RNA sequence: GGGAACGACUCGAGUAGAGUCGAAAAUAAACGAGCGUAAUCCCGUCUUGACGUGAGUGGGAUAGCCUAGACUGUAGGCUAUCCCAAGUGUGCAUAGCGCACAAUACGCUGAUCUACAGUCAAAGAACCAAUAAGCCAUAUUCGUAUGGCUUAUUGGAAAAGAAACAACAACAACAAC
Reactivity to DMS in 0.01 (KOAc 150mM, MgCl2 10mM, bicine 150mM(pH8.5), 24C), signal-to-noise 6, nucleotides 027 to 126: u010a050a090a110c200g010a030g000c010g020u010a060a110u000c010c030c000g000u000c060u010u010g010a030c020g010u000g000a040g020u000g010g000g010a010u000a000g010c000c000u000a070g010a020c020u000g010u000a030g010g010c000u010a010u000c000c000c000a000a010g010u000g020u000g000c010a170u000a140g020c110g000c010a010c000a060a090u000a010c010g020c010u000g000a110u010c170u000a000c000a010g010u000c010a130a110a090g010a110a130
Reactivity to 2A3 in 0.01 (KOAc 150mM, MgCl2 10mM, bicine 150mM(pH8.5), 24C), signal-to-noise 5, nucleotides 027 to 126: u220a020a100a020c140g010a010g020c000g010u010a020a030u030c060c050c000g020u050c070u120u250g090a020c010g010u010g020a020g020u040g000g000g000a000u000a010g000c000c000u020a050g010a040c010u020g020u030a000g000g000c000u000a000u000c000c010c000a000a000g000u000g010u020g000c080a200u170a250g050c030g000c020a000c000a010a010u030a010c000g000c010u020g010a070u030c020u060a010c000a000g000u010c000a030a060a030g050a040a050

Chemical mapping of a 177-nucleotide RNA with DMS and 2A3. The RNA was probed in 150 mM KOAc, 10 mM MgCl2 and 150 mM bicine (pH 8.5) at 24 C. For 2A3 the reverse transcriptase was SuperScript II with manganese. DMS adducts were read by reverse transcription with MarathonRT.